RNA sequence: GGGAACGACUCGAGUAGAGUCGAAAAGAUGAUGAUGAGCUUGUUGCUCAACCUGAAACAUUCGUUGAAAGCAGCAAAGAAAACGAAAAUACCACUGCUUACAUCAAUCCAUUAGAUUCGGAUUUCACGUACCAGUGGGCUUCGGCCCACUGGUACGAAAAGAAACAACAACAACAAC
Reactivity to 2A3 in 0.01 (KOAc 150mM, MgCl2 10mM, bicine 150mM(pH8.5), 24C), signal-to-noise 1, nucleotides 027 to 126: g000a000u120g000a020u000g000a000u000g000a000g000c000u060u000g000u020u020g000c000u040c000a000a000c000c080u170g070a000a300a000c130a270u000u230c000g000u020u000g000a080a080a080g020c000a060g060c090a050a260a090g120a000a070a050a000c210g160a090a160a000a000u160a250c060c000a000c180u140g000c000u180u090a000c000a000u000c080a000a060u070c300c000a170u250u300a240g200a300u300u040c000g000g000a000u000u000u130c080a080